[RMDB]
RNA sequence: GGGAACGACUCGAGUAGAGUCGAAAAUUUAGCGUUAGGAUCUAUAUUUAUAGCAACAAUUGUAGUAGCAUUCUUUAUGCCUUUUAAAUGCUGACCUGCACCUGAAAUACCACAAGCAAUGUAAAGAUUUCCGUUAAAUUUUUGACCUGACAUACCACCCCUAAUUUAGCUUCGGCUAAAUUAGGGGAAAAGAAACAACAACAACAAC
Reactivity to 2A3 in 0.01 (KOAc 150mM, MgCl2 10mM, bicine 150mM(pH8.5), 24C), signal-to-noise 2, nucleotides 027 to 156: u020u020u000a020g010c010g050u030u110a040g030g000a030u000c020u020a150u030a120u240u270u040a210u120a060g090c030a010a140c020a200a130u160u100g060u050a060g010u040a020g000c020a020u070u050c110u060u210u090a110u250g120c000c020u000u190u040u080a060a120a030u110g000c000u010g080a090c020c000u020g000c000a020c000c010u040g040a070a010a030u100a040c010c080a050c040a080a050g020c000a030a070u040g000u110a130a110a000g000a020u000u020u060c000c000g000u000u000a050a030a050u000u070u040u050u010g000a000c020c010u030g000a000c070a090u180a070c030c200a000